An RNA of 177 nucleotides, treated with 2A3 and DMS and read out base by base.
The 2A3 profile rests on 1,200 reads.

RNA sequence: GGGAACGACUCGAGUAGAGUCGAAAAAAUCCACUUGUUUGCCCAAGUGCUCUUUGAUCUCUUCUGGAUCCGACUCAGCAAAAUCAUUGCCCGGCAACAUCAAUGUGGUCGACAUCAGCGGCUCGCCCGAUGGUUCUCCAUUCGUGGAGAACCAUCGAAAAGAAACAACAACAACAAC
Reactivity to 2A3 in 0.01 (KOAc 150mM, MgCl2 10mM, bicine 150mM(pH8.5), 24C), signal-to-noise 1, nucleotides 027 to 126: a000a000u090c020c000a020c010u050u030g070u060u120u110g060c020c000c000a090a030g010u040g040c000u000c040u070u070u110g050a090u000c030u000c000u100u000c040u100g070g030a040u000c010c040g090a070c030u010c070a020g030c010a040a050a080a130u100c050a080u040u080g040c060c020c000g030g000c010a040a070c000a050u150c040a010a130u180g030u080g040g040u000c010g040a050c000a060u100c000a000g050c000g000g000c000u000c060g000c020c010
Reactivity to DMS in 0.01 (KOAc 150mM, MgCl2 10mM, bicine 150mM(pH8.5), 24C), signal-to-noise 2, nucleotides 027 to 126: a080a050u010c060c000a020c040u000u000g010u000u010u000g000c040c060c020a070a070g020u000g000c070u010c040u020u000u020g010a100u000c020u010c060u010u000c070u010g000g020a040u000c050c040g010a090c090u000c010a070g000c110a050a070a080a060u000c050a030u000u000g000c040c010c070g010g010c030a050a040c210a150u020c070a040a060u030g020u010g030g040u000c010g010a060c080a020u010c080a050g020c030g000g010c070u000c070g030c050c080

The RNA was probed in 150 mM KOAc, 10 mM MgCl2 and 150 mM bicine (pH 8.5) at 24 C.